[RMDB]
RNA sequence: GGGAACGACUCGAGUAGAGUCGAAAAGCGGGCAAAGGUGCGCAGGCAACUCGUCAGGCGAUCGACGUUAAUGAAGCAAAUCUCCAAACGCCAACGAUGAGCGUUUCGCAAUCGCCGCUUAAGGCUUCUGAUAUAUGUGGUUCGCCACAUAUAUCAGAAAAGAAACAACAACAACAAC
Reactivity to DMS in 0.01 (KOAc 150mM, MgCl2 10mM, bicine 150mM(pH8.5), 24C), signal-to-noise 3, nucleotides 027 to 126: g020c070g010g010g000c030a090a140a080g020g010u000g030c010g000c290a050g000g030c080a040a140c150u000c030g020u000c040a100g020g000c040g030a050u040c150g030a060c130g000u010u020a020a100u010g000a070a100g010c110a110a060a110u020c090u030c020c070a050a050a080c030g010c020c020a270a140c110g030a020u010g000a280g010c080g000u000u000u010c060g000c100a080a020u050c110g010c010c000g020c050u000u000a100a170g010g010c100u000u020
Reactivity to 2A3 in 0.01 (KOAc 150mM, MgCl2 10mM, bicine 150mM(pH8.5), 24C), signal-to-noise 7, nucleotides 027 to 126: g010c010g000g030g040c090a090a060a060g100g010u020g000c010g010c030a010g040g010c030a030a070c020u010c010g030u030c040a060g030g000c010g040a060u070c050g070a100c020g030u080u130a120a090u240g070a060a000g050c030a060a060a110u080c060u010c030c040a100a100a050c010g000c000c000a040a030c070g060a040u050g030a010g010c060g020u010u040u040c020g000c020a040a060u050c020g000c020c000g000c010u050u040a050a010g050g010c000u010u000